An RNA of 177 nucleotides, treated with 2A3 and DMS and read out base by base. For 2A3, 3,084 sequencing reads were counted.
RNA sequence: GGGAACGACUCGAGUAGAGUCGAAAAUGGUGUUAAGUGGAAUAAGUGGAAAAAUAUACAUAUAUGUACAGGGGGCUACAUAUAUGUAUAUGCCCCCUUGUAUCAGUAUAAGUAGGUAUAAGGUGGACCAUAUACUGGAGUUCGCUCCAGUAUAUGGAAAAGAAACAACAACAACAAC
Reactivity to 2A3 in 0.01 (KOAc 150mM, MgCl2 10mM, bicine 150mM(pH8.5), 24C), signal-to-noise 5, nucleotides 027 to 126: u070g030g010u050g030u100u070a140a060g040u090g090g040a150a120u130a180a040g040u130g030g060a030a070a020a070a010u050a000u010a000c010a000u000a000u000a000u030g000u000a030c140a150g020g010g000g100g070c020u030a000c010a000u030a000u010a010u020g010u000a000u000a000u010g000c000c000c000c010c010u000u000g000u000a000u010c020a000g060u060a070u040a300a040g180u210a050g020g010u040a030u000a030a000g020g000u020g030g020a020
Reactivity to DMS in 0.01 (KOAc 150mM, MgCl2 10mM, bicine 150mM(pH8.5), 24C), signal-to-noise 5, nucleotides 027 to 126: u010g000g000u000g000u010u000a070a170g020u010g000g010a080a070u020a070a110g000u010g010g000a020a050a050a070a030u000a010u000a010c000a020u000a010u000a020u000g000u000a020c070a130g010g020g010g000g010c190u000a020c010a010u000a010u010a010u020g000u000a010u010a020u010g010c070c000c020c000c000u000u000g010u000a010u000c020a100g030u020a300u010a030a100g000u020a070g000g010u000a010u010a010a030g000g010u000g000g010a290
DMS (dimethyl sulfate) methylates the pairing face of unpaired adenines and cytosines. For DMS, 11,007 sequencing reads were counted.